[RMDB]
RNA sequence: GGGAACGACUCGAGUAGAGUCGAAAAAACCAACAUACAUUGGUGAAGUUAAACCAGAAAUUUUUCAAAGAGCAGUCGCGAGGGUAAAAGACAUACUUAAGUCUGUGGGGAUGCAAUCGUGCAACUAACCUAAACGACGGUUCGCCGUCGUUUAGGUAAAAGAAACAACAACAACAAC
Reactivity to 2A3 in 0.01 (KOAc 150mM, MgCl2 10mM, bicine 150mM(pH8.5), 24C), signal-to-noise 3, nucleotides 027 to 126: a000a010c030c000a040a020c030a030u300a010c040a000u000u030g040g000u000g000a130a120g130u250u190a050a060a120c030c020a030g180a030a250a040u080u180u020u120u180c070a080a060a000g060a090g010c010a040g040u020c000g000c010g040a050g000g060g030u050a000a000a000a120g070a000c000a010u160a050c030u210u140a210a000g020u020c080u070g100u160g000g000g010g000a000u030g030c070a000a000u070c070g040u040g000c010a000a030c050u080a040
Reactivity to DMS in 0.01 (KOAc 150mM, MgCl2 10mM, bicine 150mM(pH8.5), 24C), signal-to-noise 2, nucleotides 027 to 126: a140a010c000c000a040a020c160a160u030a170c250a210u020u000g030g000u000g000a050a080g020u000u010a090a060a110c030c010a030g000a110a110a070u030u020u000u060u010c060a090a070a100g000a100g030c110a010g010u000c030g000c010g000a050g040g000g020u020a150a050a060a000g020a030c030a060u010a040c160u040u050a070a060g000u000c020u020g000u010g000g000g000g020a080u010g000c060a010a060u030c120g000u010g000c090a060a080c120u030a100